[RMDB]
RNA sequence: GGGAACGACUCGAGUAGAGUCGAAAAGUCUAGAGUUGCUUCCACUCUAGGUCCUGGCGUCGCUUAGGGAGCCACUGCUUCAGAUAUUUGUUGAGGGUAUCUGAGGGACUUUUACUCAACUCCGUUCGUUGGUCCACAUGUUCGUGUGAGGGCCAGAGAACACUUCUCUCUUCGGAGAGAAGUGUUCAAAAGAAACAACAACAACAAC
Reactivity to 2A3 in 0.01 (KOAc 150mM, MgCl2 10mM, bicine 150mM(pH8.5), 24C), signal-to-noise 2, nucleotides 027 to 156: g060u020c000u000a000g000a000g010u040u210g000c010u010u040c000c000a000c000u000c000u000a000g010g030u040c010c010u060g140g060c070g110u170c090g050c250u140u250a120g000g010g000a000g000c020c000a000c010u030g010c000u010u000c000a000g000a000u000a030u030u170u190g010u010u010g000a000g000g000g000u010a000u000c000u000g000a000g000g000g000a000c000u200u230u200u260a140c000u000c000a010a020c000u030c060c140g060u030u090c040g080u110u070g000g000u000c020c000a000c000a020u080g140u300u230c130g030u180g000u000g180a150g000g010g000c000c000a000g010a010